[RMDB]
RNA sequence: GGGAACGACUCGAGUAGAGUCGAAAAGUUUGCCCUCCGGAGGACUGGCUGUGACCACUGUGGUGAACAAGUCAAGCGAGGGAUUAGAUGACGCUGCCAGUUUUGCCGCUGCUCACGAUGCAGAGGCGAUAGCGGGUAGUUUCGACUACCCGCUAUCAAAAGAAACAACAACAACAAC
Reactivity to 2A3 in 0.01 (KOAc 150mM, MgCl2 10mM, bicine 150mM(pH8.5), 24C), signal-to-noise 8, nucleotides 027 to 126: g060u050u090u130g060c010c010c010u090c040c040g080g060a080g030g060a060c020u030g010g030c020u050g040u100g110a030c000c010a060c080u090g060u150g170g070u160g030a050a010c050a160a070g000u020c010a040a020g050c030g050a060g050g050g010a050u070u170a060g060a080u130g020a010c010g000c030u020g000c000c000a020g000u020u020u070u060g030c000c010g010c010u000g000c010u030c060a170c150g070a050u180g000c010a010g020a030g050g000c040
Reactivity to DMS in 0.01 (KOAc 150mM, MgCl2 10mM, bicine 150mM(pH8.5), 24C), signal-to-noise 6, nucleotides 027 to 126: g010u000u010u020g010c020c010c030u010c080c060g020g010a170g010g000a060c040u010g010g010c060u010g010u010g020a040c020c020a130c110u030g020u020g000g020u010g000a140a030c070a090a140g010u000c030a110a080g010c060g000a140g010g010g010a110u020u030a070g010a110u030g000a120c050g010c010u000g000c010c020a050g010u000u000u000u010g000c020c000g010c000u000g010c010u000c140a140c240g010a160u020g000c010a010g000a070g000g020c030